[RMDB]
RNA sequence: GGGAACGACUCGAGUAGAGUCGAAAAAAGCACUGGAGAUGACCCUUGAGGGAGGUUUCACUCUGCAGAGAUCUCUCCCCCGUCGCGUGGCGGGUGGGAACACGUUAGUGCGGGGGGAUUUGGGAUGCGAUAGAUCGUGGUUCGCCACGAUCUAUCGAAAAGAAACAACAACAACAAC
Reactivity to 2A3 in 0.01 (KOAc 150mM, MgCl2 10mM, bicine 150mM(pH8.5), 24C), signal-to-noise 1, nucleotides 027 to 126: a020a000g040c040a020c040u060g050g000a080g070a160u030g040a050c050c020c000u000u120g100a150g000g030g000a040g050g010u000u050u030c000a000c000u130c050u130g160c130a030g020a010g010a050u040c010u000c000u070c010c000c000c000c010g010u000c050g000c090g030u090g020g020c070g040g040g000u170g020g010g030a040a020c040a000c030g030u060u150a090g010u070g050c030g000g000g000g020g000g000a010u070u080u140g050g000g000a000u060g000
Reactivity to DMS in 0.01 (KOAc 150mM, MgCl2 10mM, bicine 150mM(pH8.5), 24C), signal-to-noise 1, nucleotides 027 to 126: a070a100g010c000a040c070u020g010g030a150g000a060u010g000a240c230c020c010u010u010g020a170g000g010g020a000g010g000u030u000u000c080a110c160u000c060u000g000c110a080g010a080g000a050u000c020u010c000u000c000c010c010c010c000g010u000c010g020c150g020u000g000g000c020g000g000g020u000g020g000g000a150a150c050a050c020g000u010u000a060g050u000g010c010g000g000g000g000g000g000a150u010u000u000g010g040g020a100u000g000
Notes:
Source: RMDB library RFMREP, as collected in RNAgym. This 177-nucleotide RNA was probed chemically with 2A3 and DMS. For DMS, 860 sequencing reads were counted. Conditions: 150 mM KOAc, 10 mM MgCl2 and 150 mM bicine (pH 8.5), 24 C.